RNA sequence: GGGAACGACUCGAGUAGAGUCGAAAAGCAGACUGUUAUUUUCUGGUUUAGAGCUCUUUCCAGGAACUUCUUGCAUCUAUAACCCCUGAGAACCAAGCUAUGGAAAAAAUUUUGCUCAAUUUUAAGAGUAGAUACGUAUAUUCGUAUACGUAUCUACAAAAGAAACAACAACAACAAC
Reactivity to 2A3 in 0.01 (KOAc 150mM, MgCl2 10mM, bicine 150mM(pH8.5), 24C), signal-to-noise 4, nucleotides 027 to 126: g020c000a010g020a070c060u040g080u250u120a190u120u110u030u000c010u010g050g030u040u050u110a100g010a060g070c030u020c000u100u060u010c010c010a010g020g000a040a020c010u040u000c020u050u110g010c010a050u010c040u140a130u090a280a160c020c000c000c000u040g100a090g020a110a030c020c020a020a010g030c030u050a080u180g060g000a040a010a010a010a040a130u120u210u160u100g000c010u010c040a070a130u070u100u090u150a120a020g040a030
Reactivity to DMS in 0.01 (KOAc 150mM, MgCl2 10mM, bicine 150mM(pH8.5), 24C), signal-to-noise 4, nucleotides 027 to 126: g010c030a040g010a060c210u000g000u010u000a090u000u000u000u000c020u010g000g010u000u000u010a090g000a110g010c050u000c060u000u010u000c010c020a060g000g030a050a070c080u000u000c040u000u010g010c040a050u000c080u000a080u010a100a150c080c010c020c050u000g000a140g000a060a110c050c050a030a090g010c070u000a060u000g000g010a000a020a060a080a080a090u010u010u010u000g000c030u000c040a070a060u000u000u000u020a080a140g000a300